[RMDB]
RNA sequence: GGGAACGACUCGAGUAGAGUCGAAAAGAUAUGGACGACCCUACGUGCGCACUUCGAUGAAAUAACGUAACAUCACUCGGAAACGAGUGUGGUUAUGGAGAAGGAUCACGUAGGGUCGUCCUAAGUCGCUGUGUAUAUAGUUCGCUAUAUACACAGCAAAAGAAACAACAACAACAAC
Reactivity to 2A3 in 0.01 (KOAc 150mM, MgCl2 10mM, bicine 150mM(pH8.5), 24C), signal-to-noise 1, nucleotides 027 to 126: g040a100u070a080u180g000g000a010c030g000a020c000c000c000u000a010c000g000u010g000c180g160c140a210c140u050u040c090g300a300u300g190a120a170a010u270a080a080c140g100u100a070a070c000a120u190c000a010c020u000c020g070g060a070a120a020c030g010a030g000u020g000u020g130g000u000u020a020u020g050g020a100g010a070a000g040g000a010u190c000a000c000g010u060a000g000g010g000u000c030g000u020c000c000u020a000a020g000u000c100
Reactivity to DMS in 0.01 (KOAc 150mM, MgCl2 10mM, bicine 150mM(pH8.5), 24C), signal-to-noise 5, nucleotides 027 to 126: g010a100u010a300u010g010g020a040c000g020a020c010c010c000u010a010c000g020u010g000c190g010c300a300c000u000u010c010g000a200u010g010a130a140a070u000a030a090c020g010u000a060a080c100a130u020c010a000c010u000c000g000g000a120a100a190c000g010a020g020u000g020u000g010g000u000u000a020u010g000g000a110g010a020a010g010g000a300u000c000a020c000g020u000a020g010g010g000u000c000g000u000c000c000u000a010a070g020u020c110

An RNA of 177 nucleotides, treated with 2A3 and DMS and read out base by base. It was measured as part of the RMDB library TTRINS. For DMS, 6,131 sequencing reads were counted. Reactivities are given for positions 27 through 126. For DMS the reverse transcriptase was MarathonRT.